[RMDB]
RNA sequence: GGGAACGACUCGAGUAGAGUCGAAAACAAGACCUCCUUGCUAAGGGUAAAGACGAGUUUGAUAGAUUUCUGUCGGUCUGGUGUGCCGAUGCUGAGCGCAGUCUCUCACAAACUUCUAAAGUAUGUGCUGAGAGGGACAACGUAUGUGUGGAGCUCAAUUAAUAAGACCCUUCGGGGUCUUAUUAAUAAAAGAAACAACAACAACAAC
Reactivity to 2A3 in 0.01 (KOAc 150mM, MgCl2 10mM, bicine 150mM(pH8.5), 24C), signal-to-noise 2, nucleotides 027 to 156: c080a060a010g100a080c010c000u000c000c030u060u130g110c030u130a100a070g020g040g030u140a090a130a040g150a060c050g000a000g070u060u140u120g080a080u090a060g120a040u070u170u060c070u070g050u020c040g000g020u010c030u090g110g060u070g040u060g020c000c000g000a010u010g060c020u030g010a000g020c020g000c030a050g050u020c000u000c000u020c010a000c000a060a110a040c000u130u120c060u300a020a110a000g070u160a100u230g040u050g050c080u050g060a030g010a010g080g010g010a000c010a050a010c040g070u120a050u190g050u000g050u040g010g040a030g020c020u030c130a030
Reactivity to DMS in 0.01 (KOAc 150mM, MgCl2 10mM, bicine 150mM(pH8.5), 24C), signal-to-noise 2, nucleotides 027 to 156: c030a120a090g010a110c030c020u010c020c030u000u000g070c080u000a060a110g000g000g010u000a020a040a100g010a070c020g010a120g000u000u000u000g020a140u020a080g010a170u000u000u010c040u010g020u000c000g000g020u000c020u020g000g050u000g020u000g020c020c020g000a080u000g030c040u000g000a110g050c010g020c020a200g000u000c020u010c010u000c010a100c040a040a040a070c000u000u010c160u010a110a130a140g030u000a030u000g010u000g000c040u010g040a150g020a050g010g040g000a030c000a010a040c050g000u000a040u010g000u000g040u000g000g000a190g000c020u000c010a120